Source: RMDB library TTRDEL, as collected in RNAgym. The record gives the reactivity of an RNA of 177 nucleotides to DMS and 2A3. DMS adducts were read by reverse transcription with MarathonRT.
[RMDB]
RNA sequence: GGGAACGACUCGAGUAGAGUCGAAAAGAUAUGGACGCGACUAUGAAGGUCGUAACAUCUAAUUCGGAAACGAAUUAGUGGACUGGAGUCGGUCCUAAGUCAAAAGGAAUGCCUUCGGGCAUUCCAAGAUACACUCCCCGUUCGCGGGGAGUGUAUCAAAAGAAACAACAACAACAAC
Reactivity to DMS in 0.01 (KOAc 150mM, MgCl2 10mM, bicine 150mM(pH8.5), 24C), signal-to-noise 2, nucleotides 027 to 126: g010a020u000a300u010g010g020a030c040g000c020g020a020c000u000a180u020g010a170a120g000g000u000c010g020u000a050a140c110a010u010c000u000a000a000u000u000c000g000g030a090a080a150c000g000a010a010u000u000a000g020u000g000g000a000c010u000g010g010a000g010u000c000g040g000u000c020c000u000a030a070g020u000c030a080a070a120a170g000g000a030a010u000g010c000c000u000u000c260g060g000g000c000a000u000u000c000c010a000a020
Reactivity to 2A3 in 0.01 (KOAc 150mM, MgCl2 10mM, bicine 150mM(pH8.5), 24C), signal-to-noise 2, nucleotides 027 to 126: g050a030u040a020u160g000g010a110c160g010c030g300a020c020u060a300u300g050a040a020g080g040u040c040g050u080a050a040c030a080u090c000u000a030a000u000u000c000g060g000a050a050a030c010g000a010a010u010u000a000g010u010g020g000a020c040u070g000g040a020g010u020c000g030g010u030c000c000u010a080a020g060u040c040a060a020a020a160g010g000a000a010u040g000c000c000u070u080c300g090g040g000c010a010u010u000c000c040a000a000
Description: The RNA was probed in 150 mM KOAc, 10 mM MgCl2 and 150 mM bicine (pH 8.5) at 24 C. Values are in units of 0.01, from 0 to 300, in steps of 10. The DMS profile rests on 1,331 reads.